[RMDB]
RNA sequence: GGGAACGACUCGAGUAGAGUCGAAAAACGAAGCAACACUCGAAACAGAUGACGAACUCGCAGCCAUCAACGACAUGCUCGCAGCAAUCGGUGAGUCCCCUGUGAGUUCCCUUGAGGGGGACCCUAACUUGUAUUAGGACUUCGGUCCUAAUACAAGAAAAGAAACAACAACAACAAC
Reactivity to 2A3 in 0.01 (KOAc 150mM, MgCl2 10mM, bicine 150mM(pH8.5), 24C), signal-to-noise 9, nucleotides 027 to 126: a010c050g030a050a020g050c050a020a060c020a040c060u070c030g070a110a100a030c060a060g070a090u130g050a070c040g020a080a060c030u020c060g050c030a020g010c030c010a070u060c040a060a060c030g030a010c010a040u090g010c010u020c040g040c030a040g020c020a060a140u120c050g060g020u080g040a050g040u040c020c010c000c000u050g100u050g090a050g020u010u020c000c000c000u070u130g080a130g000g020g000g000g000a000c010c000c000u080a120a100
Reactivity to DMS in 0.01 (KOAc 150mM, MgCl2 10mM, bicine 150mM(pH8.5), 24C), signal-to-noise 5, nucleotides 027 to 126: a080c070g020a060a030g010c100a070a090c120a090c070u010c060g000a100a110a110c150a080g000a050u000g020a100c120g010a050a070c070u000c050g000c020a080g000c060c070a070u000c060a070a110c040g010a030c040a030u000g010c040u010c060g030c090a080g020c090a050a070u020c050g000g020u000g000a080g020u000c010c020c030c000u000g010u030g000a070g000u000u010c000c010c000u000u020g000a130g000g020g000g000g020a020c010c030c010u000a080a140

An RNA of 177 nucleotides, treated with 2A3 and DMS and read out base by base. For DMS, 10,148 sequencing reads were counted. For 2A3 the reverse transcriptase was SuperScript II with manganese. Values cover nucleotides 27 to 126.